[RMDB]
RNA sequence: GGGAACGACUCGAGUAGAGUCGAAAAUCAAGGUGGUAGCCCUCGGAGAGGUACCAGAUGGGACUGUGGUUACUGUCAUGGCGGGUAACGAUGAAAAUUAUUCUGCUGAGCUCCGGAAUGCCUCUGCCAUCGGUCAUUACUUCGGUAAUGACCGAUGAAAAGAAACAACAACAACAAC
Reactivity to DMS in 0.01 (KOAc 150mM, MgCl2 10mM, bicine 150mM(pH8.5), 24C), signal-to-noise 2, nucleotides 027 to 126: u000c050a060a150g000g000u000g000g020u000a110g010c080c030c040u010c080g000g010a160g040a110g000g020u010a110c050c020a080g020a090u000g020g010g010a090c050u010g010u010g010g000u000u000a040c030u000g000u000c050a040u010g000g010c040g020g000g000u000a030a050c090g000a090u010g000a040a050a060a160u010u000a040u000u000c050u010g010c040u000g000a110g000c030u000c030c030g010g000a050a080u010g010c050c050u010c030u000g000c220
Reactivity to 2A3 in 0.01 (KOAc 150mM, MgCl2 10mM, bicine 150mM(pH8.5), 24C), signal-to-noise 1, nucleotides 027 to 126: u100c020a020a030g000g000u030g020g010u080a040g020c000c010c020u010c020g000g030a050g000a000g040g070u010a010c010c020a000g060a170u130g090g000g020a040c060u060g000u070g160g030u070u090a020c030u040g060u080c070a100u100g100g010c010g010g000g000u050a030a010c030g050a080u130g070a100a000a000a050u140u090a070u160u100c020u080g000c030u040g020a000g000c000u030c040c000g000g050a150a020u070g010c000c040u080c000u050g000c030

The record gives the reactivity of an RNA of 177 nucleotides to DMS and 2A3. The RNA was probed in 150 mM KOAc, 10 mM MgCl2 and 150 mM bicine (pH 8.5) at 24 C. DMS adducts were read by reverse transcription with MarathonRT. Reactivities are given for positions 27 through 126. The 2A3 profile rests on 1,153 reads. Source: RMDB library OK2TRN, as collected in RNAgym.